[RMDB]
Background:
An RNA of 207 nucleotides, treated with 2A3 and read out base by base. For 2A3, 2,071 sequencing reads were counted. It was measured as part of the RMDB library RNAMAK. As a SHAPE reagent, 2A3 marks flexible, mostly unpaired nucleotides at the ribose 2'-OH. The RNA was probed in 150 mM KOAc, 10 mM MgCl2 and 150 mM bicine (pH 8.5) at 24 C.
RNA sequence: GGGAACGACUCGAGUAGAGUCGAAAAGGGGUCGGUACAACAGCGACGUUGAGGCAUCGAUCUACACUGAAGCCUCCACGGUGUAGGGAGCCUCACCGUCGACAUGUACCGACGGAGGCACCCAAAACAGAGUGCAGUGCUUCGGCACUGCACUCUGCCACUAAAACAGCUUCGGCUGUUUUAGUGGAAAAGAAACAACAACAACAAC
Reactivity to 2A3 in 0.01 (KOAc 150mM, MgCl2 10mM, bicine 150mM(pH8.5), 24C), signal-to-noise 2, nucleotides 027 to 156: g010g020g110g030u030c060g000g020u000a060c100a300a030c070a300g180c000g010a000c000g000u000u010g020a020g000g000c010a030u300c190g000a000u000c000u000a000c000a010c010u050g030a100a010g010c000c000u030c000c000a000c010g000g070u010g000u020a020g010g000g000a000g000c000c010u000c000a000c000c000g000u000c000g010a060c020a080u270g010u000a000c000c010g000a000c000g000g000a010g000g020c010a050c000c010c020a020a150a000a020c000a020g000a000g000u000g000c000a010g020u000g000c020u080u120c250g080g000c000a000c010u000g010c000a000c000u000c000u000g000